Overview:
This 177-nucleotide RNA was probed chemically with 2A3. Values cover nucleotides 27 to 126.

RNA sequence: GGGAACGACUCGAGUAGAGUCGAAAAAGCCGAGUACGCUCGGCAAAAGUGCUGUGGAUUUCUCUGUGAAUCACCAUAUCAAAUCUAAUGUGGUGGUGGUUUGCAAAGUAAUUCAUAGUGCUUCAAAUGCACAUAACCACUUCGGUGGUUAUGUGCAAAAAGAAACAACAACAACAAC
Reactivity to 2A3 in 0.01 (KOAc 150mM, MgCl2 10mM, bicine 150mM(pH8.5), 24C), signal-to-noise 2, nucleotides 027 to 126: a000g010c020c000g040a060g000u050a060c260g000c050u000c010g000g080c010a270a000a000a000g000u000g000c000u000g000u000g000g000a000u000u020u010c000u030c000u000g010u010g010a000a000u000c000a010c000c010a010u070a030u220c080a020a170a000u010c070u240a170a240u130g110u060g160g130u000g020g000u020g000g000u040u000u000g000c000a000a000a050g010u020a000a000u000u000c000a000u040a000g000u000g000c010u030u000c040a080a170a010